[RMDB]
RNA sequence: GGGAACGACUCGAGUAGAGUCGAAAAGAUAUGGACCUGUGAUUACCUCCAACAGCUACGUUCGGAAACGAACGUAGACAUGGAGAAAUCCAGGUCCUAAGUCAAAAGCUUUGCUUCGGCAAAGCAACAUAUCCUCUGGGUUCGCCCAGAGGAUAUGAAAAGAAACAACAACAACAAC
Reactivity to DMS in 0.01 (KOAc 150mM, MgCl2 10mM, bicine 150mM(pH8.5), 24C), signal-to-noise 5, nucleotides 027 to 126: g000a040u000a300u010g010g010a010c000c000u010g020u020g010a000u000u000a160c250c000u000c000c010a050a110c300a180g030c020u000a000c000g010u000u000c000g010g010a130a110a220c000g000a010a020c000g020u000a000g010a020c080a180u010g010g000a010g010a050a030a010u000c010c000a010g000g010u010c000c000u000a000a080g010u000c030a140a090a150a190g000c000u000u000u000g020c000u000u020c250g040g000c000a010a010a010g010c000a080a110
Reactivity to 2A3 in 0.01 (KOAc 150mM, MgCl2 10mM, bicine 150mM(pH8.5), 24C), signal-to-noise 3, nucleotides 027 to 126: g020a030u080a060u130g000g010a000c000c020u080g190u290g080a010u010u060a200c010c010u000c010c010a110a090c070a230g050c000u010a000c000g010u000u000c010g000g070a050a100a080c020g000a010a000c010g000u000a000g010a000c010a030u090g000g010a000g000a010a010a000u000c000c000a000g000g010u000c000c000u000a010a000g000u000c010a030a000a070a100g000c010u000u000u000g010c000u050u100c280g100g000c000a020a000a000g010c010a000a000
The record gives the reactivity of an RNA of 177 nucleotides to DMS and 2A3. The RNA was probed in 150 mM KOAc, 10 mM MgCl2 and 150 mM bicine (pH 8.5) at 24 C. DMS adducts were read by reverse transcription with MarathonRT.